[RMDB]
RNA sequence: GGGAACGACUCGAGUAGAGUCGAAAAGAUAUGGAGGAGGGAAGCCGACGAUCUAAGUAUACUGAAUUUAUAUCGGAAACGAUAUAUUAGUCAGUAUACUUAGGGAGGCUUCAUUCCUCCUAAGUCACGUUUAUAAGAAGUUCGCUUCUUAUAAACGAAAAGAAACAACAACAACAAC
Reactivity to DMS in 0.01 (KOAc 150mM, MgCl2 10mM, bicine 150mM(pH8.5), 24C), signal-to-noise 4, nucleotides 027 to 126: g000a050u010a300u010g010g000a020g010g000a020g000g010g010a000a010g020c000c000g010a090c300g000a030u010c000u000a010a000g000u000a010u000a000c000u010g000a030a050u000u000u000a000u000a000u010c010g010g000a150a100a240c010g000a010u000a000u000a010u010u000a060g010u000c010a020g000u000a000u000a000c000u000u000a000g000g010g000a010g020g010c000u000u000c010a020u010u000c010c000u000c000c000u000a010a050g010u000c060a300
Reactivity to 2A3 in 0.01 (KOAc 150mM, MgCl2 10mM, bicine 150mM(pH8.5), 24C), signal-to-noise 3, nucleotides 027 to 126: g030a000u060a040u210g020g000a010g020g010a010g000g060g020a000a010g040c000c030g200a300c010g000a020u000c010u010a000a010g000u010a010u000a010c000u010g020a090a070u070u050u010a010u000a010u000c010g020g050a090a080a030c020g000a000u000a000u010a030u070u150a110g090u020c000a000g000u000a010u000a000c000u000u000a000g010g000g000a000g000g010c010u020u000c000a000u000u000c000c000u000c000c000u010a030a010g000u000c010a010